[RMDB]
RNA sequence: GGGAACGACUCGAGUAGAGUCGAAAAUGUGCGGCUCUAGGCGAAUUUAUAUCCGUGUUUUGCCUAGGUCGCAGUGGCAUGCACUGCCAUGCCGGGCGGUGCACGAGGAUGUAGCGUCCGCCAGUCAAGUCUCUGGAGCAUUCGUGCUUCAGGGGCUAAAAGAAACAACAACAACAAC
Reactivity to DMS in 0.01 (KOAc 150mM, MgCl2 10mM, bicine 150mM(pH8.5), 24C), signal-to-noise 9, nucleotides 027 to 126: u030g010u010g010c010g000g000c000u060c000u000a000g000g010c000g000a020a020u020u030u040a090u030a110u050c170c190g010u020g010u000u000u000u010g010c000c000u000a010g000g000u000c000g000c000a000g010u010g010g010c010a040u000g010c080a160c160u010g010c080c010a020u000g000c060c020g000g000g010c000g000g000u000g000c010a020c030g010a150g020g010a140u020g010u000a060g000c020g000u010c010c000g000c020c010a100g000u020c130a090
Reactivity to 2A3 in 0.01 (KOAc 150mM, MgCl2 10mM, bicine 150mM(pH8.5), 24C), signal-to-noise 9, nucleotides 027 to 126: u220g010u020g000c000g000g010c020u020c010u180a000g000g000c000g010a010a010u050u220u040a270u080a080u110c080c090g070u090g060u060u010u010u130g000c000c000u000a000g000g000u000c000g000c000a000g000u010g010g000c000a000u020g000c040a040c180u120g010c050c000a010u020g010c000c000g010g000g000c010g020g050u010g010c010a000c030g100a120g260g040a070u080g010u060a020g050c000g010u010c000c000g000c010c000a010g060u060c040a010

Chemical mapping of a 177-nucleotide RNA with DMS and 2A3. Conditions: 150 mM KOAc, 10 mM MgCl2 and 150 mM bicine (pH 8.5), 24 C. DMS adducts were read by reverse transcription with MarathonRT. The data come from the RNA Mapping Database (RMDB), library OK1LIB. For 2A3, 61,589 sequencing reads were counted.